Source information
Chemical mapping of a 177-nucleotide RNA with DMS and 2A3. Conditions: 150 mM KOAc, 10 mM MgCl2 and 150 mM bicine (pH 8.5), 24 C. Values cover nucleotides 27 to 126. For 2A3 the reverse transcriptase was SuperScript II with manganese.
RNA sequence: GGGAACGACUCGAGUAGAGUCGAAAAGCCAUCCUCAUGCUGGACGCGCUGGCGGCUGUGGCCGAGCAUGCGCGCGACGUGGAUGCUGACCUGGACAUUCGCAGAGAUCUGGCUGCCGCCCAAACCGGUCCAUUUUACAAUUCGUUGUAAAAUGGACAAAAGAAACAACAACAACAAC
Reactivity to DMS in 0.01 (KOAc 150mM, MgCl2 10mM, bicine 150mM(pH8.5), 24C), signal-to-noise 7, nucleotides 027 to 126: g000c090c040a050u010c050c020u000c050a100u000g020c060u010g010g010a190c020g000c030g040c000u010g000g010c020g000g010c010u000g020u010g030g020c000c010g000a050g010c020a030u010g020c020g030c010g020c030g010a090c100g000u010g000g000a040u000g000c030u000g010a140c060c050u000g010g000a140c080a070u000u020c080g010c030a070g000a110g000a080u000c080u000g000g000c020u000g010c080c130g000c000c010c020a040a110a110c170c150g010
Reactivity to 2A3 in 0.01 (KOAc 150mM, MgCl2 10mM, bicine 150mM(pH8.5), 24C), signal-to-noise 6, nucleotides 027 to 126: g010c020c010a030u050c010c010u060c020a130u190g050c040u140g070g070a100c000g000c000g010c030u030g010g050c020g010g000c020u090g100u200g300g000c000c010g010a090g100c030a050u120g010c000g000c000g000c000g020a030c050g030u060g030g010a010u010g000c030u050g060a170c020c030u030g050g010a030c020a090u050u040c070g000c070a010g010a010g020a150u040c040u040g030g000c010u030g030c030c030g010c000c000c010a040a040a030c040c050g090